[RMDB]
RNA sequence: GGGAACGACUCGAGUAGAGUCGAAAAGAUUGUUACCAUUGUGCGACCAAUGGUAACAAGAUUGCCAUCCUUGAGUAUUGACGCUACAAUACUGGAUCAUAAGCGACUAUGAUGAAGGAUGGCAAUGCUAACUACAUGGUCGCAUAUGUGGUUAGGAAUCAUCGCUGGAGUUCGCUCCAGCGAUGAUAAAAGAAACAACAACAACAAC
Reactivity to 2A3 in 0.01 (KOAc 150mM, MgCl2 10mM, bicine 150mM(pH8.5), 24C), signal-to-noise 1, nucleotides 027 to 156: g090a050u060u050g000u020u000a000c000c000a000u000u000g030u040g100c040g100a050c000c000a030a040u030g010g010u020a010a000c000a000a000g010a020u000u020g000c000c000a020u000c010c000u010u020g070a000g060u000a000u000u050g060a160c130g090c290u200a090c190a010a010u000a030c010u020g080g120a030u000c000a000u000a000a020g030c040g020a000c000u010a010u010g010a000u010g040a020a010g000g000a000u000g000g010c000a000a000u000g010c000u020a010a010c000u040a000c000a100u100g090g000u010c010g050c030a000u070a030u120g010u020g020g000u020u000a030g070g100a030
Structure probing data (2A3) for a 207-nucleotide construct. Conditions: 150 mM KOAc, 10 mM MgCl2 and 150 mM bicine (pH 8.5), 24 C. The data come from the RNA Mapping Database (RMDB), library OK3TST.